An RNA of 177 nucleotides, treated with 2A3 and DMS and read out base by base. For 2A3, 3,783 sequencing reads were counted. It was measured as part of the RMDB library OK2TST. The RNA was probed in 150 mM KOAc, 10 mM MgCl2 and 150 mM bicine (pH 8.5) at 24 C. High 2A3 reactivity points to a flexible backbone, as in loops and unpaired stretches. The DMS profile rests on 2,692 reads.
RNA sequence: GGGAACGACUCGAGUAGAGUCGAAAAGUGUGAGCGCAUGAGUCAUGGGUACGUCGUGCGGCUCCGACGGCAACACGUCGACCAGUUCGACAGUGCGCACCACCGCGACUAGACGAGCGUGCGGGUCCGUAGGUGAUGCAUUCGUGCAUCACCUACGAAAAGAAACAACAACAACAAC
Reactivity to 2A3 in 0.01 (KOAc 150mM, MgCl2 10mM, bicine 150mM(pH8.5), 24C), signal-to-noise 3, nucleotides 027 to 126: g130u160g020u040g050a040g010c010g000c020a010u040g040a060g130u000c000a020u050g040g000g090u200a110c020g020u020c000g000u030g020c000g000g020c030u060c060c060g150a110c100g000g020c000a040a000c010a010c040g010u000c010g000a130c020c020a050g080u110u130c060g010a010c020a010g010u010g020c020g010c020a030c060c000a010c010c020g020c000g000a020c020u010a040g030a140c020g040a010g030c040g010u090g120c040g040g100g010u020c020
Reactivity to DMS in 0.01 (KOAc 150mM, MgCl2 10mM, bicine 150mM(pH8.5), 24C), signal-to-noise 3, nucleotides 027 to 126: g000u020g010u010g010a150g050c020g000c000a010u000g000a190g010u010c010a130u000g000g010g000u010a060c000g030u000c030g030u000g020c300g000g010c010u000c060c090g010a090c120g010g000c010a080a060c010a030c000g020u010c000g000a080c010c040a040g020u010u000c180g000a030c020a300g010u000g000c020g000c010a110c040c010a030c030c070g020c020g000a050c010u010a080g010a110c050g010a100g010c060g000u010g010c030g010g010g000u000c060